[RMDB]
RNA sequence: GGGAACGACUCGAGUAGAGUCGAAAAGCUCGGAGACGAGCAAGGCUGACAAAACUCUGUCCCCACCUCCACGUGGUGUCGGCUGGAUAAUGCUGCAUUAUGUUGCAUUUAUCAACAGGGAAGGAAACGUACCACGUAGGUUCGCCUACGUGGUACGAAAAGAAACAACAACAACAAC
Reactivity to DMS in 0.01 (KOAc 150mM, MgCl2 10mM, bicine 150mM(pH8.5), 24C), signal-to-noise 2, nucleotides 027 to 126: g000c000u000c000g000g000a190g010a180c000g010a010g010c000a070a100g010g020c090u000g050a000c020a080a090a150a050c080u000c030u000g000u000c050c040c010c010a070c080c050u000c040c040a060c130g020u000g000g000u000g000u000c000g000g000c010u020g000g030a030u010a000a020u000g000c000u000g020c020a100u000u000a110u020g030u000u010g000c030a010u010u010u020a020u020c000a030a130c070a000g000g000g000a100a060g010g010a080a100a100
Reactivity to 2A3 in 0.01 (KOAc 150mM, MgCl2 10mM, bicine 150mM(pH8.5), 24C), signal-to-noise 5, nucleotides 027 to 126: g000c000u000c000g050g030a110g000a040c010g000a000g000c010a020a040g010g000c010u010g000a020c010a040a190a050a050c030u020c030u020g050u030c030c010c000c010a010c000c010u030c010c010a140c050g050u060g000g020u020g010u050c000g020g000c000u030g060g000a000u010a020a000u040g010c010u030g000c010a060u060u190a160u300g000u000u010g000c010a020u080u100u160a030u030c000a020a040c000a050g040g000g030a020a050g090g050a050a090a010
The record gives the reactivity of an RNA of 177 nucleotides to DMS and 2A3.
High DMS reactivity at an A or C suggests that its Watson-Crick edge is free.
The DMS profile rests on 3,049 reads.
It was measured as part of the RMDB library OK1LIB.